Structure probing data (2A3 and DMS) for a 177-nucleotide construct. DMS adducts were read by reverse transcription with MarathonRT. Reactivities are given for positions 27 through 126. The reactions ran in a buffer of 150 mM KOAc, 10 mM MgCl2 and 150 mM bicine (pH 8.5), at 24 C. It was measured as part of the RMDB library RFM100. For 2A3, 1,958 sequencing reads were counted.
RNA sequence: GGGAACGACUCGAGUAGAGUCGAAAAGGGCUCCAUAGGGCAGGGUGCCAGGUAACGCCUGGGGGGCGAGAGUCCACGGAAAGUGCCGCAGAAAAGAUACCGCCGACCCCGUCCUCGGACGGGAGGUUAGGUUGCAACUAUUCGUAGUUGCAACCUAAAAAGAAACAACAACAACAAC
Reactivity to 2A3 in 0.01 (KOAc 150mM, MgCl2 10mM, bicine 150mM(pH8.5), 24C), signal-to-noise 3, nucleotides 027 to 126: g000g000g000c040u040c010c030a060u190a100g020g020g040c090a110g040g080g030u060g030c000c000a010g040g010u050a080a040c070g070c070c000u020g010g000g000g000g000g000c020g020a070g020a000g070u000c020c000a030c010g010g070a070a080a030g000u060g050c020c020g020c030a000g100a040a160a000a020g070a040u130a060c040c020g020c000c000g060a090c000c000c000c000g000u010c000c010u030c120g050g010a000c000g010g000g020a020g030g000u010
Reactivity to DMS in 0.01 (KOAc 150mM, MgCl2 10mM, bicine 150mM(pH8.5), 24C), signal-to-noise 1, nucleotides 027 to 126: g000g010g000c110u000c010c130a050u040a160g000g000g050c030a180g020g010g000u020g040c040c030a030g000g030u020a090a060c180g000c030c040u010g000g090g010g000g000g070c110g030a100g000a170g000u000c000c010a230c060g000g000a010a000a000g000u000g000c000c040g000c090a110g040a110a040a050a060g030a090u030a130c050c020g000c040c000g030a200c300c040c000c000g000u000c030c020u000c300g020g000a000c020g030g000g030a050g020g000u000